[RMDB]
RNA sequence: GGGAACGACUCGAGUAGAGUCGAAAAGAAAGAAAGAAAGCGGUUGGGUGGGUCCAUCGACCGUCGUGGCGUAUUCGGACGCUGUACCACGACGCGAGGAAAUAGCGAGACCGACCACCCCCUUUAACAGAGGUAUAGUAGUUCGCUACUAUACCAACUUAGACUGAUCCUUCGGGAUCAGUCUAAGAAAAGAAACAACAACAACAAC
Reactivity to 2A3 in 0.01 (KOAc 150mM, MgCl2 10mM, bicine 150mM(pH8.5), 24C), signal-to-noise 1, nucleotides 027 to 156: g050a000a010a000g050a010a160a030g090a080a080a040g170c230g050g190u160u160g120g060g000u010g010g110g000u000c050c000a160u150c000g000a010c010c010g000u010c000g000u000g050g020c060g000u050a270u110u230c060g060g000a010c010g000c060u050g050u270a050c000c000a010c000g000a000c000g050c020g000a000g000g090a220a070a000u070a040g070c000g000a010g000a130c000c010g000a020c000c000a020c020c020c010c050c000u090u090u000a210a130c190a020g020a020g240g000u000a000u000a000g000u000a000g100u050u000c230g000c090u000a000c000u000a020u000a000c010c000a000a000

The record gives the reactivity of an RNA of 207 nucleotides to 2A3. Source: RMDB library M2RFPK, as collected in RNAgym. For 2A3, 430 sequencing reads were counted. The RNA was probed in 150 mM KOAc, 10 mM MgCl2 and 150 mM bicine (pH 8.5) at 24 C.